[RMDB]
RNA sequence: GGGAACGACUCGAGUAGAGUCGAAAAAGGAAAAGGAAAUCAACUUCUUCCUAGUUGAUAAAGACUGGAGGAAAAGCAACUGUUAAAACUGUGUUCAUAUGACCACACAUAGGAACUGUCAAGGAAGAUACCAAAGGACGAACUCUUCUUAAGGUAACAUCCAUAGUCGAUUCGUCGACUAUGGAUGAAAAGAAACAACAACAACAAC
Reactivity to 2A3 in 0.01 (KOAc 150mM, MgCl2 10mM, bicine 150mM(pH8.5), 24C), signal-to-noise 3, nucleotides 027 to 156: a000g060g030a030a030a010a000g070g010a080a040a030u070c010a030a030c010u050u020c000u030u030c020c000u040a010g000u000u040g040a090u080a130a100a040g060a020c030u030g030g010a010g020g000a020a060a050a000g010c020a010a080c070u060g060u150u110a040a110a030a020c060u050g030u030g040u150u040c040a060u090a080u260g040a040c040c040a030c010a000c010a100u030a030g030g000a040a030c020u030g010u090c030a050a000g040g000a010a010g010a030u070a030c040c020a070a040a020g050g010a010c060g010a080a050c030u000c020u120u070c010u090u090a100a040g000g000u030a030a010
Reactivity to DMS in 0.01 (KOAc 150mM, MgCl2 10mM, bicine 150mM(pH8.5), 24C), signal-to-noise 2, nucleotides 027 to 156: a070g000g020a050a040a120a060g050g000a090a090a110u000c020a030a060c020u010u000c090u000u000c080c010u020a040g030u010u010g000a070u000a130a070a210g000a140c120u000g040g030a140g000g020a080a060a050a070g040c030a120a120c100u020g000u010u000a070a130a080a080c040u000g020u020g100u010u010c010a040u010a040u000g030a140c020c030a060c070a030c020a120u000a060g030g010a040a030c040u000g000u000c050a050a080g030g010a060a070g020a120u000a040c030c040a030a100a030g010g030a080c080g020a040a040c110u000c020u000u010c040u010u000a080a090g040g010u000a060a140